Record summary:
An RNA of 177 nucleotides, treated with 2A3 and DMS and read out base by base. 2A3 adducts were read by reverse transcription with SuperScript II with manganese. Conditions: 150 mM KOAc, 10 mM MgCl2 and 150 mM bicine (pH 8.5), 24 C. The data come from the RNA Mapping Database (RMDB), library OK2TST.

RNA sequence: GGGAACGACUCGAGUAGAGUCGAAAAGAAAUCGAUGACAGUCUUGUUUUUGUGCUGGAAUUAAGGCAAUAUAAGACAAUUCCUUGGGUAUUGCCAACAAUUUAAGGUGUGUGAUCAGGAUAUACUCAGACCUACAACUAUUCGUAGUUGUAGGUCUAAAAGAAACAACAACAACAAC
Reactivity to 2A3 in 0.01 (KOAc 150mM, MgCl2 10mM, bicine 150mM(pH8.5), 24C), signal-to-noise 3, nucleotides 027 to 126: g040a000a120a010u130c130g040a040u050g030a020c020a040g030u000c010u010u090g050u090u080u000u060u110g100u070g110c030u060g090g120a130a100u120u070a120a040g000g000c020a020a010u040a010u010a040a030g030a040c020a020a080u080u070c000c000u050u030g050g000g010u020a030u000u080g020c030c000a040a030c060a050a060u100u170u180a100a030g070g010u070g010u000g020u040g050a050u060c010a010g060g040a020u040a030u030a120c030u030c030
Reactivity to DMS in 0.01 (KOAc 150mM, MgCl2 10mM, bicine 150mM(pH8.5), 24C), signal-to-noise 4, nucleotides 027 to 126: g010a100a120a060u010c080g020a080u000g010a160c090a100g000u000c030u000u010g010u000u010u010u000u000g020u000g010c040u010g020g030a100a050u000u010a050a220g010g000c000a020a010u000a040u000a070a070g010a060c110a090a140u010u010c040c030u000u000g010g010g010u000a010u000u000g000c000c020a050a100c150a040a050u010u000u000a060a090g020g020u000g010u010g010u000g000a050u000c040a070g000g010a070u000a080u010a060c090u000c140